Annotation: The record gives the reactivity of an RNA of 177 nucleotides to DMS and 2A3. The reactions ran in a buffer of 150 mM KOAc, 10 mM MgCl2 and 150 mM bicine (pH 8.5), at 24 C.
RNA sequence: GGGAACGACUCGAGUAGAGUCGAAAAGAUGUGCAAAUCGUUUGGAUGACUUGGGUAUAGGGGUUAAAGGCUAAUCUAGAGUGGCAAUAGCGGGUUCCCCCCAAUACUACCCGCAGGUAGACCUUGGACCUGUGGGAAUAUUCGUAUUCCCACAGGUAAAAGAAACAACAACAACAAC
Reactivity to DMS in 0.01 (KOAc 150mM, MgCl2 10mM, bicine 150mM(pH8.5), 24C), signal-to-noise 6, nucleotides 027 to 126: g000a060u000g020u020g020c120a070a080a090u030c060g010u010u000u010g000g020a110u020g000a070c080u000u000g000g000g000u010a110u020a100g000g000g000g010u010u010a030a040a070g000g020c030u010a040a090u010c100u020a080g000a070g020u010g000g010c060a040a110u010a070g010c020g010g000g010u000u000c020c010c000c030c030c040a060a060u030a090c110u010a050c000c010c140g020c120a050g020g010u000a040g010a100c110c020u000u010g000g000
Reactivity to 2A3 in 0.01 (KOAc 150mM, MgCl2 10mM, bicine 150mM(pH8.5), 24C), signal-to-noise 5, nucleotides 027 to 126: g020a050u120g030u070g060c100a030a050a080u080c050g070u040u080u080g080g010a060u060g020a070c030u060u070g100g000g000u060a080u110a130g010g030g000g020u040u080a050a110a020g030g000c010u020a050a020u070c040u060a050g030a040g150u040g010g000c050a050a080u050a120g010c030g010g000g010u030u030c000c000c000c000c000c020a050a010u100a140c050u010a010c000c010c020g020c020a000g010g010u010a000g020a050c000c050u020u030g040g020
It was measured as part of the RMDB libraries RFM100 and RFMREP.